[RMDB]
RNA sequence: GGGAACGACUCGAGUAGAGUCGAAAAGGCUGUUGAAAUACAUUCCUGUGCCGGCAAUACAGUGUGUAUGGAGAUCUCAAUGGCUCGGAAGUGCCAGCAAACCGGCGUAGAUAUUAGCAGACGUAUGAUAGGAUGCAUCCGUUCGCGGAUGCAUCAACAGAUUACUCUGGUUCGCCAGAGUAAUCUGAAAAGAAACAACAACAACAAC
Reactivity to 2A3 in 0.01 (KOAc 150mM, MgCl2 10mM, bicine 150mM(pH8.5), 24C), signal-to-noise 5, nucleotides 027 to 156: g040g010c020u010g020u070u050g050a070a060a020u140a020c040a030u090u090c010c010u030g020u050g030c020c000g010g000c060a060a070u120a110c040a060g080u020g020u010g020u140a070u080g040g040a090g010a100u020c030u010c040a070a090u070g010g000c040u050c050g060g040a090a050g020u020g050c020c010a030g010c050a020a030a110c020c000g010g000c020g000u030a040g030a120u050a070u150u130a040g050c050a020g000a050c050g090u110a070u120g110a100u070a110g180g010a000u000g000c010a010u010c010c020g010u030u060c210g000c000g120g000a000u000g000c000a000u000c000a000a000
Reactivity to DMS in 0.01 (KOAc 150mM, MgCl2 10mM, bicine 150mM(pH8.5), 24C), signal-to-noise 3, nucleotides 027 to 156: g000g000c010u000g020u000u010g000a070a080a120u000a060c040a070u010u010c300c030u000g030u000g010c010c000g000g000c030a060a100u010a050c000a060g000u010g030u010g020u000a090u000g000g040a160g000a120u000c030u000c040a050a130u000g020g060c030u000c080g030g020a130a100g010u000g010c010c020a080g000c060a060a150a050c000c040g010g030c050g020u010a040g020a120u000a080u000u000a100g010c030a130g010a070c050g020u000a100u010g020a170u000a110g030g000a020u000g000c010a000u010c010c010g010u000u020c300g030c020g010g000a010u000g010c000a000u000c010a020a140